RNA sequence: GGGAACGACUCGAGUAGAGUCGAAAAACUGCCAUACGUGGCAGAAACACGCCUUACCAGGACUAAACAGCGUGUCUAAAAAACAGUCCUUCAUACCUGAUCUGGAGGGUAGAUCAAGAAUACUAAAAAAAUCGGGUGAAGUUCGCUUCACCCGAAACAACUUCGAUGUGUUCGCACAUCGAAGUUGAAAAGAAACAACAACAACAAC
Reactivity to 2A3 in 0.01 (KOAc 150mM, MgCl2 10mM, bicine 150mM(pH8.5), 24C), signal-to-noise 1, nucleotides 027 to 156: a000c010u010g000c000c000a000u030a090c180g060u040g010g040c000a000g020a010a000a000c000a000c010g010c000c000u010u040a020c060c100a010g040g010a000c000u040a170a010a000c020a000g010c000g000u000g010u000c080u000a000a000a000a000a000a000c030a000g000u000c040c000u020u100c080a160u100a180c010c010u040g030a040u090c030u080g060g120a040g020g020g010u020a010g000a010u080c020a010a010g070a120a050u180a230c090u290a040a020a010a010a020a090a150u040c000g000g000g010u000g010a000a000g010u030u160c100g070c090u010u020c000a000c000c000c000g000a000a010a000